This 177-nucleotide RNA was probed chemically with 2A3 and DMS. The reactions ran in a buffer of 150 mM KOAc, 10 mM MgCl2 and 150 mM bicine (pH 8.5), at 24 C. The DMS profile rests on 1,943 reads. Reactivities are rounded to 0.1 and cut off at 0 and 3. For DMS the reverse transcriptase was MarathonRT. The 2A3 profile rests on 2,920 reads. The data come from the RNA Mapping Database (RMDB), library RFM100.

[RMDB]
RNA sequence: GGGAACGACUCGAGUAGAGUCGAAAAACUAGUUGAUUCCAUCGACUCGUUCAAGCACCAGCUCGAAGAAGCUUAGCUAAUUUAUCUUAGAAAAUAAUGAAAAAGCUAUGCUUCUCAAGAAGGUGCAGUUCAAACGUUUUUUCGAAAACGUUUGAACAAAAGAAACAACAACAACAAC
Reactivity to 2A3 in 0.01 (KOAc 150mM, MgCl2 10mM, bicine 150mM(pH8.5), 24C), signal-to-noise 5, nucleotides 027 to 126: a000c070u080a040g040u020u110g020a060u170u100c110c070a050u010c050g010a010c010u010c030g020u020u050c090a110a000g000c000a000c010c000a030g040c010u000c020g130a220a080g000a000a000g040c000u010u000a000g000c000u020a060a260u000u030u030a130u030c030u040u040a050g170a080a200a060a060u140a070a070u100g050a070a060a060a030a000g000c010u000a010u030g000c000u000u020c010u010c000a010a010g010a020a010g000g000u000g000c020a000
Reactivity to DMS in 0.01 (KOAc 150mM, MgCl2 10mM, bicine 150mM(pH8.5), 24C), signal-to-noise 2, nucleotides 027 to 126: a030c130u080a150g010u030u010g020a040u000u000c020c070a290u020c030g020a000c060u000c030g000u000u000c010a060a070g000c000a000c010c010a050g010c000u040c110g010a090a090g010a000a000g000c000u000u000a020g000c000u010a070a220u010u000u000a010u020c010u000u000a150g000a160a110a130a100u000a020a020u010g000a010a010a000a180a020g000c020u030a000u000g000c000u000u020c000u000c000a030a080g040a020a040g010g050u000g030c000a150